[RMDB]
RNA sequence: GGGAACGACUCGAGUAGAGUCGAAAAGCGCUGGUUAUCUAUGGUCCGACUCUGUGUCAAAAGUAAAGUAGCUGCCUUUGUGAUGGUCAGCUUAUAAAUAACAAUUUCUAGGAGGUUAUAAAGGCAGGGAUAAUAUUAUAUUCGUAUAAUAUUAUCCAAAAGAAACAACAACAACAAC
Reactivity to 2A3 in 0.01 (KOAc 150mM, MgCl2 10mM, bicine 150mM(pH8.5), 24C), signal-to-noise 2, nucleotides 027 to 126: g000c000g000c030u050g030g010u070u030a040u010c030u010a080u060g060g000u000c000c000g030a020c010u000c010u020g060u010g050u050c010a030a100a020a000g050u040a020a020a060g040u010a010g030c010u000g000c000c000u010u030u040g030u010g030a020u030g020g070u080c010a000g000c000u010u040a040u010a010a050a000u090a010a030c060a030a120u000u060u000c010u030a020g000g020a020g020g040u050u000a020u020a050a000a000g010g000c020a000g000
Reactivity to DMS in 0.01 (KOAc 150mM, MgCl2 10mM, bicine 150mM(pH8.5), 24C), signal-to-noise 2, nucleotides 027 to 126: g020c060g020c010u010g020g000u010u020a040u040c040u010a060u010g010g020u000c020c040g020a050c080u010c030u010g030u000g000u000c030a040a050a120a090g040u010a050a030a090g020u030a080g020c000u000g000c000c000u000u010u000g020u030g000a030u020g020g010u020c060a130g000c030u010u020a010u000a020a050a080u000a120a080c090a070a080u010u010u000c070u000a040g020g010a050g000g010u010u010a010u000a030a000a020g000g000c010a030g010
Source information:
Structure probing data (2A3 and DMS) for a 177-nucleotide construct. For DMS, 4,329 sequencing reads were counted. The 2A3 profile rests on 2,505 reads. The RNA was probed in 150 mM KOAc, 10 mM MgCl2 and 150 mM bicine (pH 8.5) at 24 C. Source: RMDB library OK1LIB, as collected in RNAgym.